An RNA of 177 nucleotides, treated with 2A3 and DMS and read out base by base. For 2A3 the reverse transcriptase was SuperScript II with manganese. Reactivities are given for positions 27 through 126. The 2A3 profile rests on 2,416 reads.
RNA sequence: GGGAACGACUCGAGUAGAGUCGAAAAGAUAUGGACGUUUAACGAUAAGAAUGUGGUCGGAAACGACCAAUUCUUUUGACGUUGCCGUCCUAAGUCAAAGGAAGUGAACGUUCGCGUUCACUUCCAAGAUCAGUCGACAGUUCGCUGUCGACUGAUCAAAAGAAACAACAACAACAAC
Reactivity to 2A3 in 0.01 (KOAc 150mM, MgCl2 10mM, bicine 150mM(pH8.5), 24C), signal-to-noise 2, nucleotides 027 to 126: g000a010u020a010u080g010g010a000c010g020u090u250u190a020a000c050g050a240u120a260a010g030a030a030u300g050u090g300g000u010c020g020g010a040a040a020c020g020a000c000c000a020a000u010u000c000u030u120u050u210g090a040c000g000u000u010g000c000c000g000u020c000c000u000a070a000g030u040c070a120a030a060g000g010a000a000g000u000g000a020a010c050g030u080u140c300g050c000g100u030u000c000a000c000u000u000c000c000a000a010
Reactivity to DMS in 0.01 (KOAc 150mM, MgCl2 10mM, bicine 150mM(pH8.5), 24C), signal-to-noise 2, nucleotides 027 to 126: g010a070u020a300u000g000g010a030c010g000u000u020u030a010a010c000g010a250u000a020a020g010a010a010u000g000u000g000g010u010c000g000g000a030a090a100c010g020a010c000c000a020a000u000u000c010u000u000u040u000g040a180c060g000u000u000g010c300c000g010u000c000c010u010a040a070g020u000c010a110a110a200g000g030a040a000g000u000g000a020a000c020g020u000u000c220g040c000g050u010u000c000a010c000u000u000c000c000a010a010
For DMS the reverse transcriptase was MarathonRT.
The reactions ran in a buffer of 150 mM KOAc, 10 mM MgCl2 and 150 mM bicine (pH 8.5), at 24 C.
Source: RMDB library TTRDEL, as collected in RNAgym.